[RMDB]
RNA sequence: GGGAACGACUCGAGUAGAGUCGAAAACUAGGACGGGAACGCGCUUACGCCUAGCCCGCGGCUCCGGCUCCAGGCCCUCGGCACGCGCCGCCUUCUCCAGCUGCGACGCUGCGGCCCCUCGGACGCCGACACUCUAAAGCUUCGGCUUUAGAGUGUCAAAAGAAACAACAACAACAAC
Reactivity to DMS in 0.01 (KOAc 150mM, MgCl2 10mM, bicine 150mM(pH8.5), 24C), signal-to-noise 2, nucleotides 027 to 126: c020u010a040g000g000a110c050g000g000g010a080a130c110g000c050g000c090u000u010a080c060g010c000c010u000a060g000c060c020c010g020c120g020g000c040u010c030c020g020g000c020u000c100c080a050g010g000c080c040c020u020c070g000g000c010a090c140g020c100g010c020c010g010c050c050u010u020c050u010c030c080a100g000c060u000g000c020g000a040c100g020c020u010g010c280g010g010c030c010c040c010u000c090g010g010a080c120g010c070c090
Reactivity to 2A3 in 0.01 (KOAc 150mM, MgCl2 10mM, bicine 150mM(pH8.5), 24C), signal-to-noise 1, nucleotides 027 to 126: c050u060a040g000g100a070c050g010g000g070a180a080c050g060c020g000c070u090u170a060c020g010c020c010u000a050g000c000c000c000g070c030g020g000c010u040c030c040g050g000c020u040c030c030a030g030g000c000c000c050u080c060g010g000c030a040c110g130c040g000c050c000g030c020c000u080u070c030u020c030c010a030g000c000u040g060c090g020a060c090g030c060u060g000c000g000g020c000c030c000c020u060c030g070g010a040c060g020c010c030
This 177-nucleotide RNA was probed chemically with DMS and 2A3.
For 2A3 the reverse transcriptase was SuperScript II with manganese.
The reactions ran in a buffer of 150 mM KOAc, 10 mM MgCl2 and 150 mM bicine (pH 8.5), at 24 C.